Conditions: 150 mM KOAc, 10 mM MgCl2 and 150 mM bicine (pH 8.5), 24 C. Chemical mapping of a 207-nucleotide RNA with 2A3 and DMS. For DMS, 6,592 sequencing reads were counted.
RNA sequence: GGGAACGACUCGAGUAGAGUCGAAAAUGGCGAUUCGUCGCCACAUUGCCGUAGGUUAUGAACUACUUCAUUAUAGACGAAGAACAACGCUUCGAAAGAGGCGUUGGGAGUCUAGAAUGAAGCAUAACCUAAACGGGUUACAGAGCUUCGGCUCUAACCAUCAUCUAAAAUUCGUUUUAGAUGAUGGAAAAGAAACAACAACAACAAC
Reactivity to 2A3 in 0.01 (KOAc 150mM, MgCl2 10mM, bicine 150mM(pH8.5), 24C), signal-to-noise 9, nucleotides 027 to 156: u090g000g000c010g010a020u050u050c250g050u030c010g130c050c060a080c090a110u160u200g040c000c000g010u000a010g000g000u000u000a000u010g020a080a050c060u150a060c000u300u000c000a000u010u030a020u000a040g010a020c040g210a300a070g020a060a010c000a000a000c000g000c010u000u010c010g020a040a040a020g010a000g000g000c000g000u000u000g000g000g000a010g000u000c000u000a010g010a010a010u000g000a000a000g000c000a000u000a000a000c000c000u000a010a010a000c000g000g010g030u050u160a090c100a090g010a000g010c020u090u170c280g100g000c000u000c010u020a030a020
Reactivity to DMS in 0.01 (KOAc 150mM, MgCl2 10mM, bicine 150mM(pH8.5), 24C), signal-to-noise 3, nucleotides 027 to 156: u010g020g000c000g010a040u000u000c300g030u000c000g000c010c000a020c060a050u000u010g030c000c010g020u010a030g010g010u010u000a040u000g020a110a280c030u000a290c000u000u000c010a020u000u000a050u000a010g000a010c030g010a130a220g010a160a200c000a010a010c000g010c010u000u000c010g030a140a120a230g020a030g000g000c000g010u000u010g000g020g000a230g030u000c010u010a010g000a020a000u000g000a030a000g000c010a030u000a000a010c000c010u000a000a040a080c040g000g000g000u010u020a140c120a060g000a030g020c030u000u000c260g030g000c010u000c030u000a050a180